[RMDB]
An RNA of 207 nucleotides, treated with 2A3 and DMS and read out base by base. Reactivities are given for positions 27 through 156. The reactions ran in a buffer of 150 mM KOAc, 10 mM MgCl2 and 150 mM bicine (pH 8.5), at 24 C.

RNA sequence: GGGAACGACUCGAGUAGAGUCGAAAACCUCUGUAAUGGGAUGGGAUCCGAAGCCCCAUUGAGGGAUAAUACAGGCUCUCCCAUCCAACUCCUAUUCCAACACGUCCUCGUCGUACAGAGUGGUAACUAAGGUAUAGCUCCUUCGGGAGCUAUACAACAUUCCUUUGAACUUCGGUUCAAAGGAAUGAAAAGAAACAACAACAACAAC
Reactivity to 2A3 in 0.01 (KOAc 150mM, MgCl2 10mM, bicine 150mM(pH8.5), 24C), signal-to-noise 2, nucleotides 027 to 156: c000c000u050c030u080g040u070a110a100u130g110g000g000a000u010g010g000g000a030u210c010c010g030a040a010g050c010c010c000c040a120u120u160g090a300g020g000g000a010u070a140a100u120a190c130a040g010g000c000u000c010u000c010c010c000a000u000c000c000a000a010c000u000c000c000u040a090u080u050c000c020a050a020c010a040c070g010u020c010c020u110c040g050u030c010g000u020a000c020a040g030a050g070u060g010g050u070a090a070c100u060a180a000g060g010u000a010u000a000g000c000u010c010c000u060u060c060g030g000g000a000g050c000u000a000u000a000c010a000a000
Reactivity to DMS in 0.01 (KOAc 150mM, MgCl2 10mM, bicine 150mM(pH8.5), 24C), signal-to-noise 1, nucleotides 027 to 156: c010c010u020c030u000g020u020a110a130u000g010g030g000a020u000g000g040g040a050u010c050c010g040a080a210g040c010c000c000c000a300u000u000g000a120g000g000g000a120u010a090a130u000a100c060a220g050g020c020u000c100u010c010c010c010a090u010c020c010a030a060c020u010c030c030u020a080u000u010c030c020a100a130c090a070c070g010u000c040c030u010c020g010u010c060g000u010a100c030a080g000a030g000u010g010g040u010a040a130c090u000a070a150g060g020u020a010u000a010g000c000u010c000c000u000u000c300g000g000g000a030g000c000u010a000u010a010c000a120a170